[RMDB]
RNA sequence: GGGAACGACUCGAGUAGAGUCGAAAAUUCCUGCUGGGAAUGAGGAUGGGGAGUGUGAUGUAAGAACUGUUUUCCCAGGUAAAGAACUCUGGCAACAUUCUGCAGUCCCUGGAAAAGCUGUGUUCCCGAAACUCUAAUAGUUCGCUAUUAGAGUUUCAAAAGAAACAACAACAACAAC
Reactivity to 2A3 in 0.01 (KOAc 150mM, MgCl2 10mM, bicine 150mM(pH8.5), 24C), signal-to-noise 4, nucleotides 027 to 126: u040u000c010c000u010g050c080u060g000g000g040a050a070u040g020a050g070g030a040u130g050g010g000g000a040g020u060g020u050g070a160u100g040u150a090a030g020a070a040c060u020g020u020u020u040u040c020c010c000a000g020g010u070a130a200a040g050a060a030c030u020c020u180g040g010c000a010a010c000a050u060u010c010u040g000c000a020g080u010c010c000c000u010g030g030a050a090a020a000g040c030u040g050u040g010u150u010c000c000c010
Reactivity to DMS in 0.01 (KOAc 150mM, MgCl2 10mM, bicine 150mM(pH8.5), 24C), signal-to-noise 6, nucleotides 027 to 126: u000u000c000c010u000g040c120u000g010g000g010a050a030u010g010a070g010g000a130u010g000g010g000g010a060g010u010g030u010g000a090u010g010u010a090a070g010a070a060c130u000g010u000u000u000u000c150c000c000a190g000g000u010a060a090a140g010a090a070c080u010c020u000g010g030c190a090a050c040a060u000u000c020u000g010c030a050g000u000c030c010c000u000g000g000a080a060a080a100g010c060u000g020u000g000u000u000c000c010c020